[RMDB]
RNA sequence: GGGAACGACUCGAGUAGAGUCGAAAACGCUCCAGGAGAGAGCGCAUCAGUCGAUCAGGCCCGGAAGUGAAGUGAAGGGAUAGGGAACGGGCGCCCACCCAUAAGAACUGAUCGACAUCUCCAGAAACCAUGUAGCUUCGUUCGCGAAGCUACAUGGAAAAGAAACAACAACAACAAC
Reactivity to DMS in 0.01 (KOAc 150mM, MgCl2 10mM, bicine 150mM(pH8.5), 24C), signal-to-noise 1, nucleotides 027 to 126: c010g020c010u000c000c060a220g010g000a000g010a010g000a020g000c000g020c060a070u030c200a040g070u000c000g000a020u000c040a050g040g010c000c000c010g020g010a280a090g000u020g010a120a300g000u000g020a240a100g000g000g010a040u020a150g060g000g040a170a110c030g000g000g030c030g000c000c010c030a210c000c010c010a120u010a090a070g000a120a300c000u000g110a000u000c000g000a030c030a010u000c000u000c000c000a300g030a240a140a050
Reactivity to 2A3 in 0.01 (KOAc 150mM, MgCl2 10mM, bicine 150mM(pH8.5), 24C), signal-to-noise 1, nucleotides 027 to 126: c000g000c000u000c020c030a090g040g000a010g000a000g010a000g030c000g060c020a210u180c080a080g020u000c000g000a010u000c000a000g090g000c030c000c030g020g020a100a090g090u140g210a080a040g060u050g060a000a060g100g060g020a080u190a160g020g010g020a090a040c080g030g030g000c020g060c020c000c000a000c010c000c010a060u090a090a080g100a080a030c020u010g020a000u000c000g000a010c000a000u000c010u000c000c000a010g100a080a050a020